[RMDB]
RNA sequence: GGGAACGACUCGAGUAGAGUCGAAAAAGGAGCACGACAUCCAUGUGCCGCCGCGCAAGACGCCGCGUAAUGUAUCCCAUCCACCGCUGUCCAAGCGGAAUGUUUCCUCGCGGCGGGUCAAACUGGAACACCCUUUACUUUUCGAAGUAAAGGGUGUAAAAGAAACAACAACAACAAC
Reactivity to 2A3 in 0.01 (KOAc 150mM, MgCl2 10mM, bicine 150mM(pH8.5), 24C), signal-to-noise 3, nucleotides 027 to 126: a000g050g000a040g010c040a010c070g130a040c020a100u010c040c010a070u130g030u030g050c020c020g030c010c010g020c020g000c050a080a050g060a050c010g010c020c000g030c010g060u110a010a110u140g050u100a120u030c030c000c010a020u050c040c030a060c030c010g000c040u050g100u140c070c060a080a020g000c000g010g000a010a010u040g000u000u060u040c020c030u030c000g010c000g000g000c090g020g010g000u090c030a000a060a060c030u050g020g020a030
Reactivity to DMS in 0.01 (KOAc 150mM, MgCl2 10mM, bicine 150mM(pH8.5), 24C), signal-to-noise 7, nucleotides 027 to 126: a060g010g010a100g010c050a060c060g000a090c100a090u000c070c060a070u000g010u000g010c020c030g020c040c030g010c030g010c180a110a100g000a110c040g010c010c010g010c050g020u010a060a050u000g010u000a090u000c010c010c010a110u000c110c100a110c030c010g010c010u000g000u010c130c130a110a050g010c000g010g000a040a020u010g000u000u000u010c030c050u000c030g010c000g000g010c000g010g000g010u010c090a060a090a080c070u000g010g000a280